[RMDB]
RNA sequence: GGGAACGACUCGAGUAGAGUCGAAAACGAGGUAACGGGGGCUAUGUGGUCAGCCAGCCUGAGACGCCACAAAGCAGUAGGGUUGGCAAAAUGGUCGUGAUUCCUUCUAGCUUAAUACAUAUUUCGGACCGGGGUUCGACUCCCCGCACCUCCACCACUACUACUCAAAGUUCGCUUUGAGUAGUAGAAAAGAAACAACAACAACAAC
Reactivity to DMS in 0.01 (KOAc 150mM, MgCl2 10mM, bicine 150mM(pH8.5), 24C), signal-to-noise 2, nucleotides 027 to 156: c020g010a080g040g050u040a050a120c020g020g000g020g040g060c070u000a050u000g030u000g000g040u000c080a300g050c000c000a040g010c020c000u040g060a300g010a040c040g050c090c080a300c150a150a110a120g020c000a110g010u000a190g010g010g060u000u000g010g000c060a050a000a070a060u010g000g010u020c040g090u000g020a210u000u010c010c020u000u000c050u000a090g020c070u000u010a070a160u000a110c050a110u000a240u000u000u000c000g040g000a020c060c070g010g010g010g020u010u010c060g000a190c050u010c000c000c030c020g030c100a030c000c020u010c000c020a120c020c060a210
Reactivity to 2A3 in 0.01 (KOAc 150mM, MgCl2 10mM, bicine 150mM(pH8.5), 24C), signal-to-noise 3, nucleotides 027 to 156: c020g000a010g000g010u050a170a040c020g020g010g000g000g050c010u060a060u230g100u060g090g020u040c000a000g000c010c010a000g010c020c000u030g000a020g040a040c090g030c030c060a170c140a220a110a000g000c020a000g000u050a000g000g000g000u000u000g020g020c020a000a040a040a030u070g020g000u020c030g060u110g030a060u100u050c010c010u060u040c040u070a040g030c030u050u060a060a010u080a160c060a070u210a130u070u110u130c060g020g010a020c040c050g040g000g000g070u030u060c020g010a020c010u080c030c000c000c000g000c000a000c000c000u030c020c000a020c030c000a020